[RMDB]
RNA sequence: GGGAACGACUCGAGUAGAGUCGAAAAGUUACGUGCUCCAUCAACUGAAUCAAUUUCAUCUUCUGAAAUUAAUGUUUGAAGAUUUAAAAUUUCUUUUUUCAUAUGUCCUCACCUCCUUUUCAGUUUAGUACUCAUAUUUAUUCGUAAAUAUGAGUACAAAAGAAACAACAACAACAAC
Reactivity to 2A3 in 0.01 (KOAc 150mM, MgCl2 10mM, bicine 150mM(pH8.5), 24C), signal-to-noise 3, nucleotides 027 to 126: g040u030u070a020c050g000u030g020c000u010c030c020a060u090c050a050a050c030u080g080a080a090u070c060a070a060u100u030u020c020a060u000c030u160u060c030u040g040a090a020a030u140u130a140a050u140g060u020u100u060g010a010a010g000a000u080u060u220a030a150a080a100u020u100u070c000u080u100u020u030u040u010c030a060u080a090u280g040u000c040c000u010c010a020c010c000u030c010c060u040u040u060u060c010a000g030u090u020u020a000
Reactivity to DMS in 0.01 (KOAc 150mM, MgCl2 10mM, bicine 150mM(pH8.5), 24C), signal-to-noise 3, nucleotides 027 to 126: g010u010u000a070c130g020u010g020c030u000c020c040a090u020c080a060a080c070u000g000a130a040u020c100a040a070u000u000u000c080a030u000c110u000u010c080u000g010a040a040a080u000u000a100a100u010g000u010u000u000g010a030a060g010a020u000u000u010a040a060a120a150u000u010u010c000u010u000u010u000u000u000c020a030u010a090u010g000u000c010c000u000c040a060c040c020u000c010c020u000u000u000u000c060a110g000u000u000u010a150
An RNA of 177 nucleotides, treated with 2A3 and DMS and read out base by base. For 2A3, 1,963 sequencing reads were counted. It was measured as part of the RMDB library OK2TST. DMS adducts were read by reverse transcription with MarathonRT. The RNA was probed in 150 mM KOAc, 10 mM MgCl2 and 150 mM bicine (pH 8.5) at 24 C. For DMS, 2,798 sequencing reads were counted.